RNA sequence: GGGAACGACUCGAGUAGAGUCGAAAAUGUUGAGGAAGGCCAGAAUAAUAUUGCGUAUGACUGGCGGUGCGUAAUCCGCCAAGCGCAGGUAGCCGCGAAAGCCGAGUGCCAGUACAUCAACCAGACUAAGAUACAGAAGGUUCGCCUUCUGUAUCUUAAAAGAAACAACAACAACAAC
Reactivity to DMS in 0.01 (KOAc 150mM, MgCl2 10mM, bicine 150mM(pH8.5), 24C), signal-to-noise 6, nucleotides 027 to 126: u020g000u020u000g000a040g010g010a170a100g000g010c020c030a120g010a110a100u020a080a080u040a070u010u000g000c010g000u000a100u040g000a130c240u000g010g000c000g010g000u010g000c210g000u020a140a090u030c000c010g000c010c000a010a090g010c020g030c000a020g000g010u030a060g030c050c040g000c120g000a040a110a120g000c010c040g000a100g000u030g010c010c020a060g000u040a070c070a050u000c050a050a060c040c110a120g010a120c180u010
Reactivity to 2A3 in 0.01 (KOAc 150mM, MgCl2 10mM, bicine 150mM(pH8.5), 24C), signal-to-noise 5, nucleotides 027 to 126: u160g000u010u040g000a040g040g030a070a050g030g000c000c030a010g150a090a100u190a130a030u130a100u140u060g010c000g030u060a060u200g110a160c070u020g000g010c030g010g000u030g010c140g050u100a040a060u040c000c010g000c000c000a020a020g000c010g000c010a000g020g030u020a020g050c060c040g040c010g070a060a020a000g040c020c010g000a020g020u090g020c020c030a050g020u090a050c020a120u060c000a020a030c020c010a020g010a060c070u010
Chemical mapping of a 177-nucleotide RNA with DMS and 2A3. DMS adducts were read by reverse transcription with MarathonRT. 2A3 adducts were read by reverse transcription with SuperScript II with manganese.